[RMDB]
RNA sequence: GGGAACGACUCGAGUAGAGUCGAAAACACCCUUGGCACGAGCGAUUGUCAGGGGUAGCUUUCUGCGCUUUUCAAAAAUCGGAAGAAAUUUGUACCUUUUGAGACGAAGGUUUGUAUACCGAGGAACCGAGGUAAAAAACUUCGGUUUUUUACCUCGAAAAGAAACAACAACAACAAC
Reactivity to 2A3 in 0.01 (KOAc 150mM, MgCl2 10mM, bicine 150mM(pH8.5), 24C), signal-to-noise 6, nucleotides 027 to 126: c020a010c000c000c000u010u010g010g000c020a020c070g090a130g110c090g190a220u110u050g010u010c000a000g000g000g000g000u000a010g030c020u030u120u050c040u110g030c030g010c080u100u080u060u080c060a050a060a040a070a060u050c020g050g030a060a010g100a070a210a090u150u160u190g070u100a060c000c000u020u040u040u130g180a120g020a030c080g020a040a010g010g000u010u000u040g020u010a050u030a060c010c010g010a020g000g060a030a010c060
Reactivity to DMS in 0.01 (KOAc 150mM, MgCl2 10mM, bicine 150mM(pH8.5), 24C), signal-to-noise 4, nucleotides 027 to 126: c060a060c000c000c020u000u010g000g000c000a020c100g020a150g030c180g000a120u030u000g010u000c010a010g000g010g010g010u000a000g020c060u000u000u000c020u010g010c050g010c060u020u010u010u000c050a040a080a040a160a140u000c000g010g020a120a060g000a200a080a170u010u010u020g010u010a050c040c000u000u000u010u030g010a110g010a080c100g000a050a040g010g010u000u010u010g020u020a080u020a060c020c020g000a060g000g000a110a100c300
The record gives the reactivity of an RNA of 177 nucleotides to 2A3 and DMS. Values are in units of 0.01, from 0 to 300, in steps of 10. 2A3 adducts were read by reverse transcription with SuperScript II with manganese. 2A3 is a SHAPE reagent: it acylates the 2'-hydroxyl of flexible nucleotides of all four kinds.